[RMDB]
RNA sequence: GGGAACGACUCGAGUAGAGUCGAAAAGACCUUCCAGUACGGCCAGCAUUCGGUCGUGUUGGAAACCGGCGAGAUGGCUCGCCAGGCGUCCGGCGCGGUGCUGGUGUCCGUGGAGGACACCGUCGUACUACGUCCUGGAUUUCGAUCCAGGACGUAGAAAAGAAACAACAACAACAAC
Reactivity to 2A3 in 0.01 (KOAc 150mM, MgCl2 10mM, bicine 150mM(pH8.5), 24C), signal-to-noise 2, nucleotides 027 to 126: g020a030c000c000u040u000c010c000a010g010u040a000c020g040g030c010c000a060g100c110a290u170u250c120g080g020u070c030g010u020g000u010u010g000g000a030a000a000c030c020g000g000c010g000a030g020a150u240g210g140c000u000c000g040c000c000a040g030g030c050g020u070c010c000g060g020c020g000c000g060g000u040g040c100u160g000g060u010g020u000c000c020g090u160g140g230a060g000g020a000c010a010c000c000g040u020c010g000u040a070
Reactivity to DMS in 0.01 (KOAc 150mM, MgCl2 10mM, bicine 150mM(pH8.5), 24C), signal-to-noise 3, nucleotides 027 to 126: g000a210c040c040u000u000c000c030a030g000u000a020c010g000g020c010c040a090g010c170a260u020u010c140g050g030u000c000g020u000g020u000u020g000g000a000a030a130c070c050g020g000c000g030a040g010a300u010g020g000c020u000c030g010c010c010a020g030g000c160g020u000c010c020g020g010c020g030c080g000g020u000g010c090u000g030g000u000g010u000c000c020g000u000g010g000a300g010g000a030c010a010c000c010g010u000c110g010u010a130